This 207-nucleotide RNA was probed chemically with 2A3 and DMS. For 2A3 the reverse transcriptase was SuperScript II with manganese. It was measured as part of the RMDB library M2RFPK. 2A3 is a SHAPE reagent: it acylates the 2'-hydroxyl of flexible nucleotides of all four kinds. The RNA was probed in 150 mM KOAc, 10 mM MgCl2 and 150 mM bicine (pH 8.5) at 24 C.

[RMDB]
RNA sequence: GGGAACGACUCGAGUAGAGUCGAAAACGUCCCCGUCGUACAGAAUGGUAACAUAUCUCUCCAAAUAUCUGAGCUUGGGUAUACGGGGAAACCCAACCCCUUGGGAAGAUUGGGUAUAUGGCUAAAGUACAUCGAUUGUACUUCGGUACAAUCGAAACCAUAUAUUACGGUUCGCCGUAAUAUAUGGAAAAGAAACAACAACAACAAC
Reactivity to 2A3 in 0.01 (KOAc 150mM, MgCl2 10mM, bicine 150mM(pH8.5), 24C), signal-to-noise 3, nucleotides 027 to 156: c040g120u040c010c000c000c020g150u130c030g000u030a020c000a050g140a180a180u130g060g020u110a230a020c010a010u050a030u010c100u010c020u040c100c030a080a120a100u220a080u050c020u020g010a010g090c010u020u010g010g000g000u020a030u000a040c020g000g000g010g000a030a020a020c000c000c000a010a030c000c000c000c000u010u020g020g010g020a020a010g010a030u050u060g010g000g010u020a010u000a010u030g030g000c030u060a110a060a050g010u020a020c020a100u020c010g000a000u000u000g000u000a000c000u020u040c160g080g000u000a000c000a000a000u000c000g000a020a000a000
Reactivity to DMS in 0.01 (KOAc 150mM, MgCl2 10mM, bicine 150mM(pH8.5), 24C), signal-to-noise 3, nucleotides 027 to 156: c040g000u010c000c010c010c050g000u000c050g010u000a120c050a100g000a190a130u010g010g010u010a120a110c060a070u010a030u000c070u000c070u000c020c030a060a170a120u010a060u000c040u000g010a300g040c050u000u000g020g070g020u000a170u000a110c060g000g000g020g010a100a060a150c010c010c000a060a060c100c000c020c050u010u000g000g010g000a210a040g000a070u000u000g020g020g020u000a070u000a060u000g030g000c020u010a060a070a110g010u010a050c030a140u000c030g010a030u000u010g000u000a000c010u000u000c210g080g000u000a010c010a010a020u000c000g000a000a030a090